[RMDB]
RNA sequence: GGGAACGACUCGAGUAGAGUCGAAAAAGCAAGCGCACUCUGUGUCACAUUGAUUGACCUCAUGUGAAUACAAUUUGUAAGUUUGCCAGAGUAAGGUGUAGCUUCUUAUCCAUGUGAUUGGACUCCAAGUACGUGGGUGUUUCGACACCCACGUACUAAAAGAAACAACAACAACAAC
Reactivity to DMS in 0.01 (KOAc 150mM, MgCl2 10mM, bicine 150mM(pH8.5), 24C), signal-to-noise 1, nucleotides 027 to 126: a020g020c070a030a040g030c000g000c050a030c000u000c050u000g010u010g030u030c000a000c020a010u010u020g010a030u020u020g000a110c300c230u030c000a010u000g000u000g000a090a070u010a040c040a060a080u000u000u010g000u030a040a080g000u000u010u000g010c110c030a040g000a080g000u000a090a090g030g000u000g010u000a070g000c060u000u000c030u000u000a080u000c010c000a000u000g010u000g020a130u040u000g000g010a130c090u000c030c030a070
Reactivity to 2A3 in 0.01 (KOAc 150mM, MgCl2 10mM, bicine 150mM(pH8.5), 24C), signal-to-noise 2, nucleotides 027 to 126: a000g020c030a030a030g000c010g000c030a010c000u110c000u030g030u010g000u000c000a000c000a000u140u230g010a040u110u160g090a080c000c000u000c010a030u000g020u000g010a000a070u180a070c070a040a180u120u130u240g130u160a160a100g010u040u230u090g000c020c020a000g090a000g050u050a060a000g050g000u000g000u050a060g040c000u000u070c000u050u070a030u040c010c020a060u150g060u010g150a140u040u050g030g010a010c020u050c000c000a080